[RMDB]
RNA sequence: GGGAACGACUCGAGUAGAGUCGAAAAUGAUAUAAUCUGCAUCCGACAACGAUCACCAACUUCCACCUUGAUCGAUUGGUCGCAUAAUCCAUUAAAUUUGGAAGUAGUCGCUCAUGCUUAUAAGUACCACCUGAUUAGGCUUCGGCCUAAUCAGGUGAAAAGAAACAACAACAACAAC
Reactivity to DMS in 0.01 (KOAc 150mM, MgCl2 10mM, bicine 150mM(pH8.5), 24C), signal-to-noise 1, nucleotides 027 to 126: u000g030a120u000a110u010a060a090u000c050u030g020c000a060u000c260c000g070a050c080a030a050c160g000a080u000c080a070c110c170a090a030c070u070u000c000c000a050c290c030u000u010g030a080u000c200g010a030u020u000g020g000u000c170g000c150a040u040a000a020u000c000c000a040u070u000a070a000a160u000u000u000g000g000a000a000g060u000a030g030u000c090g000c050u000c120a000u000g000c060u000u000a070u100a020a110g020u000a110c290
Reactivity to 2A3 in 0.01 (KOAc 150mM, MgCl2 10mM, bicine 150mM(pH8.5), 24C), signal-to-noise 3, nucleotides 027 to 126: u090g040a000u030a000u020a190a090u070c020u100g040c020a020u020c030c030g040a020c060a160a040c080g020a020u050c020a000c080c000a030a110c010u010u010c010c000a040c000c040u000u050g020a000u090c010g000a040u000u060g080g000u120c020g010c020a050u040a130a020u080c010c010a020u070u210a130a100a040u060u030u070g030g010a010a010g010u000a050g040u010c010g010c000u010c030a020u040g000c030u080u000a100u030a160a070g120u150a070c000
An RNA of 177 nucleotides, treated with DMS and 2A3 and read out base by base.